The record gives the reactivity of an RNA of 177 nucleotides to DMS and 2A3. For 2A3 the reverse transcriptase was SuperScript II with manganese. For DMS the reverse transcriptase was MarathonRT.

RNA sequence: GGGAACGACUCGAGUAGAGUCGAAAAGGGGACCAGAAACGACACUCGCGCGCUUUAGGGACCGGAGAGCUGGCACACGACCGCAGGGCGACCUGCGCGAUGCCCACACCACACACUCCGCCCCGCGACCAUGUAUAAAUUUCGAUUUAUACAUGGUAAAAGAAACAACAACAACAAC
Reactivity to DMS in 0.01 (KOAc 150mM, MgCl2 10mM, bicine 150mM(pH8.5), 24C), signal-to-noise 9, nucleotides 027 to 126: g000g000g010g010a160c050c040a090g010a070a080a090c080g000a090c110a070c050u000c050g010c040g020c050g010c060u010u010u010a090g010g000g010a060c120c030g010g010a070g010a110g010c100u010g010g000c030a040c100a080c100g010a140c300c000g000c010a020g010g000g000c260g010a160c010c000u000g000c020g010c040g000a130u010g010c030c010c050a060c080a070c050c040a050c080a070c090a090c040u000c020c020g010c050c010c010c020g010c150g000
Reactivity to 2A3 in 0.01 (KOAc 150mM, MgCl2 10mM, bicine 150mM(pH8.5), 24C), signal-to-noise 9, nucleotides 027 to 126: g030g000g010g010a030c020c020a020g090a040a130a010c050g050a010c020a010c050u030c020g020c000g000c000g010c030u100u080u170a070g010g010g030a050c060c000g020g010a070g000a010g030c080u070g010g000c020a030c010a020c060g060a060c050c000g000c010a000g010g010g010c040g040a100c000c000u010g000c000g000c010g020a020u050g010c000c010c000a030c000a010c010c010a030c000a000c000a010c040u010c010c000g010c010c000c000c000g010c010g010